The record gives the reactivity of an RNA of 177 nucleotides to DMS. The DMS profile rests on 928 reads. Reactivities are given for positions 27 through 126. The reactions ran in a buffer of 150 mM KOAc, 10 mM MgCl2 and 150 mM bicine (pH 8.5), at 24 C.

RNA sequence: GGGAACGACUCGAGUAGAGUCGAAAAGCAGGUGGCGGCCCACGUCGUCCAGACUUCGCACGGCCUUGCCCAUCACGAGCGCCGUGACCAGGUUGGCCCCGUUCAGGACCAUCUCGCCGUACGUCACAGCAUCCGACACAUUCGUGUGUCGGAUGCUAAAAGAAACAACAACAACAAC
Reactivity to DMS in 0.01 (KOAc 150mM, MgCl2 10mM, bicine 150mM(pH8.5), 24C), signal-to-noise 1, nucleotides 027 to 126: g000c080a010g000g010u000g000g030c010g000g050c010c090c100a070c040g020u000c060g010u020c010c050a060g020a020c080u000u000c150g000c030a050c020g020g000c010c060u010u010g010c030c010c130a180u000c100a270c000g000a060g000c110g020c060c030g030u000g000a110c080c070a060g000g030u000u000g000g020c030c080c030c080g020u010u010c100a030g000g000a110c020c000a040u010c040u000c090g010c000c060g020u010a030c100g020u030c030a060c070